RNA sequence: GGGAACGACUCGAGUAGAGUCGAAAAGAGAGUUACAUUAAGUCAAUGAUGAUCAUUAUUCCUGGAUCUGGCAAGGACACAAAAGCUGAACCCGGAGAAGUCAAUCCAGACCUAAAGGCUGUCAUUGCAGAAGUUGAGUUUUCGAACUCAACUUCUGAAAAGAAACAACAACAACAAC
Reactivity to 2A3 in 0.01 (KOAc 150mM, MgCl2 10mM, bicine 150mM(pH8.5), 24C), signal-to-noise 5, nucleotides 027 to 126: g120a010g030a010g030u150u190a110c060a090u160u170a170a020g040u060c030a060a050u040g030a020u040g050a060u080c020a070u050u220a040u140u100c020c000u030g000g030a090u020c050u040g010g000c060a080a050g010g040a020c010a000c020a040a150a030a050g030c060u030g030a070a110c000c020c000g060g000a080g010a090a000g030u000c000a000a020u020c010c010a000g020a040c010c000u100a110a070a030g040g010c040u010g030u090c010a020u040u130g000
Reactivity to DMS in 0.01 (KOAc 150mM, MgCl2 10mM, bicine 150mM(pH8.5), 24C), signal-to-noise 3, nucleotides 027 to 126: g020a110g010a120g010u010u010a050c110a070u020u030a060a070g030u030c100a010a100u000g000a060u040g000a050u010c050a090u000u000a110u020u030c070c010u010g010g000a020u000c070u010g000g020c060a080a110g000g000a060c100a020c070a100a100a070a100g010c090u000g020a050a100c050c020c010g000g000a170g010a060a050g000u020c010a110a110u020c050c010a020g010a070c070c090u020a040a070a050g010g000c050u000g000u020c010a050u010u050g000
This 177-nucleotide RNA was probed chemically with 2A3 and DMS. The 2A3 profile rests on 3,048 reads. The RNA was probed in 150 mM KOAc, 10 mM MgCl2 and 150 mM bicine (pH 8.5) at 24 C.